[RMDB]
Notes
Conditions: 150 mM KOAc, 10 mM MgCl2 and 150 mM bicine (pH 8.5), 24 C. Structure probing data (DMS) for a 177-nucleotide construct. For DMS the reverse transcriptase was MarathonRT.
RNA sequence: GGGAACGACUCGAGUAGAGUCGAAAAUGGUCCUGGCUCCCACUAGAGAGUUGGCCCAGCAGAUCCAGCAGGUAGCCAUUGAGUUUGGCAGCAACACGCAUGUGCGCAACACUUGCAUCUUUGGUGAACGGAUGGGGUAUUUCGAUACCCCAUCCGUAAAAGAAACAACAACAACAAC
Reactivity to DMS in 0.01 (KOAc 150mM, MgCl2 10mM, bicine 150mM(pH8.5), 24C), signal-to-noise 2, nucleotides 027 to 126: u000g020g030u000c050c000u000g050g020c020u010c000c020c040a140c150u010a090g000a080g010a070g020u000u010g000g000c040c020c030a100g010c110a100g000a130u000c020c040a080g000c040a050g010g000u000a120g000c030c020a070u020u000g000a090g000u000u000u000g040g020c000a110g030c080a050a080c110a120c140g000c040a070u000g000u000g040c070g030c260a070a200c080a000c040u010u000g000c030a220u010c050u000u000u000g050g000u000g000a110